[RMDB]
RNA sequence: GGGAACGACUCGAGUAGAGUCGAAAACAGGCUCAUCCUCCUCUUUUCGUUCCUCACGCUCGUUGCGAGUGUGCCUCAGGGACUCCUCGCCAUCAACGUGAUCAGGGAGGUGAUCGGAGGAUGGUUCCCCGAAAGAGAGGUUCGCCUCUCUUUCGGGAAAAGAAACAACAACAACAAC
Reactivity to 2A3 in 0.01 (KOAc 150mM, MgCl2 10mM, bicine 150mM(pH8.5), 24C), signal-to-noise 2, nucleotides 027 to 126: c020a040g100g000c000u010c050a050u050c020c030u010c000c030u070c090u020u060u110u080c050g080u060u040c020c000u000c010a000c020g010c000u050c050g180u090u170g090c060g020a030g020u150g020u080g080c000c000u070c080a130g020g010g070a100c010u010c010c010u030c030g160c040c010a040u070c020a030a240c080g110u110g000a030u110c050a030g020g040g000a020g080g020u020g020a030u090c040g020g000a010g060g000a020u000g010g080u040u000c000
Reactivity to DMS in 0.01 (KOAc 150mM, MgCl2 10mM, bicine 150mM(pH8.5), 24C), signal-to-noise 1, nucleotides 027 to 126: c190a210g030g000c060u000c010a050u000c060c020u010c050c020u000c090u020u000u000u000c040g000u020u000c000c000u000c020a000c010g060c020u000c180g040u020u000g000c050g000a020g040u020g010u000g000c150c020u010c270a120g000g000g010a120c030u000c180c010u000c010g000c020c070a080u000c040a070a100c130g000u000g000a070u010c110a080g000g000g030a040g000g010u000g010a050u000c140g020g030a050g000g000a020u000g000g020u000u000c010
Record summary
An RNA of 177 nucleotides, treated with 2A3 and DMS and read out base by base. It was measured as part of the RMDB library OK2TST. The DMS profile rests on 1,024 reads. 2A3 adducts were read by reverse transcription with SuperScript II with manganese.